[RMDB]
RNA sequence: GGGAACGACUCGAGUAGAGUCGAAAACAUAAAGGAAUGCACUAUGGGAGUGAUGUCCUCGCCAACCUAGUACAACCACACCUCAGUAGACCACACUUUCAAAACAUCACUCGGAAAAUUACACAGGGAUGCAUCUUGUGCACUACAAACAAACAAACCCAAAAUUACCGUUCGCGGUAAUUUUGGGAAAAGAAACAACAACAACAAC
Reactivity to 2A3 in 0.01 (KOAc 150mM, MgCl2 10mM, bicine 150mM(pH8.5), 24C), signal-to-noise 2, nucleotides 027 to 156: c020a010u180a050a080a070g060g000a140a020u060g000c000a010c030u050a010u090g110g030g010a050g050u020g040a020u060g030u010c010c010u040c050g100c080c040a120a100c030c050u030a070g080u070a040c030a140a030c040c030a030c010a050c060c020u030c080a040g010u010a020g090a010c060c000a010c020a040c010u060u180u110c080a100a100a000a020c000a010u040c000a010c020u020c000g000g010a140a170a050a030u130u130a090c110a010c020a010g030g020g000a000u070g000c020a000u000c020u080u050g020u020g000c000a010c020u040a020c010a020a150a030c070a020a130a020c130a010a120a030
This 207-nucleotide RNA was probed chemically with 2A3. For 2A3, 655 sequencing reads were counted. The RNA was probed in 150 mM KOAc, 10 mM MgCl2 and 150 mM bicine (pH 8.5) at 24 C. It was measured as part of the RMDB library OK3TST.